[RMDB]
RNA sequence: GGGAACGACUCGAGUAGAGUCGAAAACUCACGGGCGUUGGAAGGGGCUGUUUCCUGCUCGCACGCCGCGUACACAUUCAUGUUUACCUUCCACGAUGCUACAGUGUAAAGCUGCAUCGACUCAUAGCCGUGCAGUGACCUUCGGGUCACUGCACGGAAAAGAAACAACAACAACAAC
Reactivity to 2A3 in 0.01 (KOAc 150mM, MgCl2 10mM, bicine 150mM(pH8.5), 24C), signal-to-noise 2, nucleotides 027 to 126: c020u000c000a000c020g030g040g030c020g080u080u070g040g040a050a070g000g000g040g000c010u020g110u090u020u020c000c000u040g020c050u030c040g100c000a000c030g000c000c010g090c000g020u160a010c060a000c000a030u200u200c000a050u170g050u040u110u070a130c000c000u000u000c050c000a040c040g010a000u060g000c020u080a090c030a090g010u020g100u300a050a150a060g040c010u000g000c030a000u000c000g030a030c030u020c100a050u210a150g000